RNA sequence: GGGAACGACUCGAGUAGAGUCGAAAAACUCAUCAUUUGGAUUAUUUUAGCCCUUCCAUGAUGAUCCAUAGAUUGCAGAGCUUUUAAUAAUGGAAGCUUUAAGGACUCAGGGAAGACCAGGUGGCCAAGCUAAUAGUUUCUUCGGAAACUAUUAGCUAAAAGAAACAACAACAACAAC
Reactivity to 2A3 in 0.01 (KOAc 150mM, MgCl2 10mM, bicine 150mM(pH8.5), 24C), signal-to-noise 2, nucleotides 027 to 126: a040c080u070c050a070u030c020a030u020u060u120g030g030a050u030u120a100u070u280u100u190a120g030c010c030c000u000u000c020c000a010u030g030a030u030g000a040u000c020c000a050u080a070g230a090u040u270g130c150a000g010a020g050c000u080u080u040u090a300a150u300a170a060u250g060g010a000a010g020c000u030u060u060a040a040g020g000a000c020u010c020a000g000g000g020a020a000g000a030c010c050a010g040g020u020g060g000c060c000a020
Reactivity to DMS in 0.01 (KOAc 150mM, MgCl2 10mM, bicine 150mM(pH8.5), 24C), signal-to-noise 2, nucleotides 027 to 126: a070c040u010c060a080u010c050a090u000u020u000g020g010a130u000u010a080u010u000u000u000a130g030c100c020c020u010u000c010c010a040u000g010a030u000g010a110u000c000c010a140u010a110g020a130u010u000g020c210a100g010a010g000c000u000u000u010u000a030a200u000a130a090u020g000g000a030a010g010c010u000u000u000a100a100g000g000a060c040u000c030a050g000g010g000a030a050g000a150c050c030a080g000g000u010g010g000c110c090a060